RNA sequence: GGGAACGACUCGAGUAGAGUCGAAAAUGGUAGUCCGCCACUCUAAGGGGACGCAUUUAGAAGAAGAGGCUAGGUGGUAUUCCGGUGUGGGAUACUUGGUAAUAUGUAACGCUAAUUGCAUAAGAUUAAAACUUUGCAUACUUCGGUAUGCAAAGAAGUAUGUGAAAUCGUUCGCGAUUUCACAUACAAAAGAAACAACAACAACAAC
Reactivity to DMS in 0.01 (KOAc 150mM, MgCl2 10mM, bicine 150mM(pH8.5), 24C), signal-to-noise 1, nucleotides 027 to 156: u000g020g030u020a120g020u020c010c000g050c030c010a060c070u010c150u000a160a110g050g020g030g030a080c040g030c030a030u010u020u020a070g000a100a110g030a080a150g000a020g000g030c010u000a040g030g060u010g040g010u000a100u000u010c060c040g020g010u010g040u050g040g000g020a090u000a030c040u000u010g010g040u000a070a120u000a060u010g010u000a020a030c070g020c100u030a080a150u000u000g040c030a050u010a020a130g010a200u000u000a020a040a120a180c020u010u000u000g010c000a020u000a010c000u000u010c270g030g020u000a000u000g000c010a000a000a000g000a040a050
Reactivity to 2A3 in 0.01 (KOAc 150mM, MgCl2 10mM, bicine 150mM(pH8.5), 24C), signal-to-noise 2, nucleotides 027 to 156: u070g050g060u050a110g030u020c030c030g060c120c000a100c040u130c040u130a150a190g000g010g000g000a000c010g020c000a000u060u120u140a060g020a120a000g000a000a020g020a020g040g010c070u040a010g000g080u010g000g040u090a070u060u070c030c000g100g030u110g020u120g090g000g000a020u020a060c000u000u070g020g000u070a070a060u040a060u110g050u030a020a000c050g020c140u040a120a060u080u050g000c020a020u030a120a060g040a130u100u210a050a100a060a040c000u010u000u010g000c000a010u000a000c000u000u020c000g050g000u000a000u000g000c000a000a000a000g000a000a010